An RNA of 177 nucleotides, treated with DMS and 2A3 and read out base by base. The reactions ran in a buffer of 150 mM KOAc, 10 mM MgCl2 and 150 mM bicine (pH 8.5), at 24 C. As a SHAPE reagent, 2A3 marks flexible, mostly unpaired nucleotides at the ribose 2'-OH. DMS adducts were read by reverse transcription with MarathonRT. The data come from the RNA Mapping Database (RMDB), library OK2TST.
RNA sequence: GGGAACGACUCGAGUAGAGUCGAAAAUGGUUGAGUACGAUCACUCUUUUGCACAAUUACUUGAAGAAACCACUGCCCGCUCUGUCUCCAGAAUGCUCUGUGUCAGUAUAGAUUUGCAAGAUUUUACUGUCACUAGCUAUUUCGAUAGCUAGUGACAAAAAGAAACAACAACAACAAC
Reactivity to DMS in 0.01 (KOAc 150mM, MgCl2 10mM, bicine 150mM(pH8.5), 24C), signal-to-noise 2, nucleotides 027 to 126: u000g000g020u000u000g010a130g050u010a040c140g030a120u000c060a170c080u010c050u000u000u010u010g010c080a090c100a080a070u000u000a070c050u000u010g030a080a120g000a100a090a050c040c020a090c150u010g000c090c010c030g000c040u000c030u010g000u000c030u000c050c040a010g000a050a070u000g010c040u000c070u010g020u000g010u010c060a070g010u010a070u000a060g010a090u000u000u020g050c070a090a080g000a110u010u000u000u000a060c090
Reactivity to 2A3 in 0.01 (KOAc 150mM, MgCl2 10mM, bicine 150mM(pH8.5), 24C), signal-to-noise 1, nucleotides 027 to 126: u110g040g010u020u080g020a030g040u140a000c080g040a110u120c040a010c010u000c000u030u020u040u090g080c040a030c020a200a120u080u150a070c080u060u170g090a060a100g020a100a040a030c050c000a010c040u020g000c000c000c000g030c020u030c020u020g070u010c010u020c040c000a000g030a160a060u100g000c010u060c010u070g070u050g070u100c010a010g080u070a070u100a140g120a090u050u050u160g070c040a000a160g060a160u030u030u080u120a090c090